[RMDB]
RNA sequence: GGGAACGACUCGAGUAGAGUCGAAAAAUCGCUUUCGAGCGAUACGUCGGGGUCGUCGUUGAAACAAGCUGGAGACCAAUACUGAAGCCUCCACGGUAUUGGUCGUUGAAAGCUUGUGGAGACGACGGAGGCACCCAGUUCCACGGUUCGCCGUGAAAUGGAGUAUAUGAUUCGUCAUAUACUCCAUAAAAGAAACAACAACAACAAC
Reactivity to 2A3 in 0.01 (KOAc 150mM, MgCl2 10mM, bicine 150mM(pH8.5), 24C), signal-to-noise 7, nucleotides 027 to 156: a000u020c030g000c040u140u120u140c300g100a030g010c000g010a000u040a100c100g200u140c100g050g130g050g010u010c010g000u000c000g150u210u010g000a000a000a000c000a000a000g000c000u010g010g010a010g000a000c010c000a000a000u000a000c010u010g040a200a040g010c000c000u010c000c010a030c020g000g000u000a000u000u000g010g010u000c000g000u070u010g000a000a000a000g000c000u000u000g000u000g000g000a010g000a000c000g000a020c000g000g000a000g000g000c000a030c010c020c010a050g090u190u040c050c000a010c010g000g030u070u070c200g050c110c000g040u030g020a120a040
Reactivity to DMS in 0.01 (KOAc 150mM, MgCl2 10mM, bicine 150mM(pH8.5), 24C), signal-to-noise 3, nucleotides 027 to 156: a060u000c010g030c010u000u010u000c230g010a060g030c010g010a000u000a030c100g000u010c090g020g000g030g020u000c030g040u000c020g010u000u000g020a300a230a040c000a020a030g030c020u000g020g010a150g010a020c010c000a010a040u000a030c030u000g030a040a120g000c020c020u000c020c030a270c030g010g010u010a010u010u000g020g030u000c020g000u000u000g020a160a190a100g010c000u000u000g000u000g010g000a300g010a020c020g010a070c030g000g010a030g000g030c010a080c010c000c000a300g010u010u000c010c000a050c050g000g000u000u000c270g060c000c000g010u000g010a050a070